Chemical mapping of a 207-nucleotide RNA with DMS and 2A3. For 2A3 the reverse transcriptase was SuperScript II with manganese. The data come from the RNA Mapping Database (RMDB), library RNAMAK. DMS adducts were read by reverse transcription with MarathonRT. Values cover nucleotides 27 to 156.

[RMDB]
RNA sequence: GGGAACGACUCGAGUAGAGUCGAAAAACCAAGUUCGCUUGGUGAUGAUCCUAAGUCCCACACUAUCUCCGUUGUCAGAUGCACUCGGAAACGAGUGGACAUCUUGGAUUUACGGAGACGAAUGUGGGAUAUGGAAUACCGUGUCUUUCGAGACAAAGAAGGCAAAUACUUUCGAGUAUUUGCCUUCAAAAGAAACAACAACAACAAC
Reactivity to DMS in 0.01 (KOAc 150mM, MgCl2 10mM, bicine 150mM(pH8.5), 24C), signal-to-noise 1, nucleotides 027 to 156: a060c020c000a020a100g010u000u000c290g010c000u000u000g000g030u000g000a070u010g000a130u000c010c010u000a120a300g020u000c000c000c010a000c010a020c050u000a090u000c000u000c010c020g010u000u000g010u010c010a100g010a040u000g030c000a100c040u000c000g030g000a140a100a190c030g000a030g020u000g000g000a160c040a020u030c020u000u000g040g000a020u000u000u000a010c010g010g000a050g000a040c050g000a020a020u000g000u000g000g030g000a010u010a020u000g000g000a050a130u000a050c030c020g020u010g000u000c000u000u010u000c110g010a160g030a080c040a140a100a170
Reactivity to 2A3 in 0.01 (KOAc 150mM, MgCl2 10mM, bicine 150mM(pH8.5), 24C), signal-to-noise 3, nucleotides 027 to 156: a000c010c000a010a010g010u030u160c240g010c180u020u010g020g020u080g030a130u140g040a090u030c000c020u020a090a030g050u000c000c010c000a000c000a000c010u080a030u050c000u000c000c000g000u000u030g010u020c000a000g000a010u000g010c010a000c000u000c000g050g000a070a090a010c010g000a000g010u030g000g030a070c000a000u000c000u020u110g030g000a000u090u030u300a010c000g000g000a020g000a000c020g140a170a270u010g000u000g000g000g000a000u000a000u010g000g000a010a070u020a130c050c040g070u070g000u090c010u020u150u060c220g090a030g080a020c020a010a080a040